[RMDB]
This 177-nucleotide RNA was probed chemically with 2A3.

RNA sequence: GGGAACGACUCGAGUAGAGUCGAAAAUGCAUUAGGUGAACGUUUUAAAUAUCAUCGUCAUUUCUUCGUGCCUGAUAAUGUUGGACAUGAUGGAUUCCUACUAAACUUUAGUACCUGGGCACCUAACGCAGACCUACAACUUCGGUUGUAGGUCUGCAAAAGAAACAACAACAACAAC
Reactivity to 2A3 in 0.01 (KOAc 150mM, MgCl2 10mM, bicine 150mM(pH8.5), 24C), signal-to-noise 1, nucleotides 027 to 126: u260g000c030a000u000u300a060g000g020u030g020a080a000c080g000u000u050u220u300a090a150a090u300a120u030c010a000u020c030g000u080c060a060u000u030u220c020u000u000c000g080u000g020c100c000u020g050a060u050a230a110u250g030u000u020g130g000a000c000a040u160g000a000u180g050g000a140u030u040c020c020u000a000c000u000a050a050a050c000u030u160u120a050g000u120a150c110c090u000g000g000g000c000a000c000c000u000a080a000c000

The reactions ran in a buffer of 150 mM KOAc, 10 mM MgCl2 and 150 mM bicine (pH 8.5), at 24 C. Source: RMDB library OK1LIB, as collected in RNAgym. 2A3 adducts were read by reverse transcription with SuperScript II with manganese.